[RMDB]
RNA sequence: GGGAACGACUCGAGUAGAGUCGAAAACGACUGUAAUGGUCAAGGUGGGUUUGAAGGCACUUGAUUUUCUCAAUGUCUCUAUUCCAUGUCCAAAUCUGGAAGCCCAGCGGCGCCCAGCACGAACCUUAUUCCAACCAUGGUUCGCCAUGGUUGGAAUAAAAGAAACAACAACAACAAC
Reactivity to 2A3 in 0.01 (KOAc 150mM, MgCl2 10mM, bicine 150mM(pH8.5), 24C), signal-to-noise 4, nucleotides 027 to 126: c040g040a000c010u040g060u200a100a140u200g000g010u040c020a020a020g090g020u050g020g000g000u060u060u190g150a140a050g020g030c040a030c120u000u020g010a020u140u060u200u110c090u010c000a010a020u010g000u020c010u000c010u070a150u080u000c000c010a010u100g050u070c050c120a100a030a070u090c050u000g030g020a030a000g000c030c000c000a040g080c030g080g010c030g010c000c000c000a010g010c020a020c050g030a010a070c000c010u020u020
Reactivity to DMS in 0.01 (KOAc 150mM, MgCl2 10mM, bicine 150mM(pH8.5), 24C), signal-to-noise 1, nucleotides 027 to 126: c110g000a080c000u000g000u020a110a070u090g000g000u000c000a180a060g000g000u000g000g000g000u100u040u000g050a130a000g000g000c000a000c300u000u000g000a170u030u040u000u000c050u020c020a000a030u000g000u010c000u010c000u000a170u020u000c020c040a060u010g060u050c150c130a030a120a110u000c200u000g010g000a000a110g000c100c040c000a000g000c090g030g000c000g000c160c000c080a090g050c030a040c130g000a110a050c170c040u000u000